[RMDB]
RNA sequence: GGGAACGACUCGAGUAGAGUCGAAAAGAUAUGGAAUCGCACGGGCCUGUAUACCAGACAUGCUGGGGUGUCGGAAACGACAUGCACAGCAACAGCUGGUAUACAGGCCCGUGACGAUUCCUAAGUCGAUAACAAGAGAGUUCGCUCUCUUGUUAUCAAAAGAAACAACAACAACAAC
Reactivity to DMS in 0.01 (KOAc 150mM, MgCl2 10mM, bicine 150mM(pH8.5), 24C), signal-to-noise 2, nucleotides 027 to 126: g000a130u000a300u010g000g010a020a000u010c000g000c000a010c000g000g000g010c000c020u010g020u000a010u000a000c000c000a020g010a050c100a230u000g030c000u000g000g000g000g040u000g010u010c010g010g000a090a090a260c010g000a010c000a000u000g020c080a100c000a010g000c010a040a080c300a180g000c000u010g000g010u010a000u000a000c010a000g000g000c010c000c000g000u000g000a020c000g000a010u000u000c000c000u000a020a090g020u000c100

Conditions: 150 mM KOAc, 10 mM MgCl2 and 150 mM bicine (pH 8.5), 24 C.
This 177-nucleotide RNA was probed chemically with DMS.
The data come from the RNA Mapping Database (RMDB), library TTRINS.
For DMS, 3,910 sequencing reads were counted.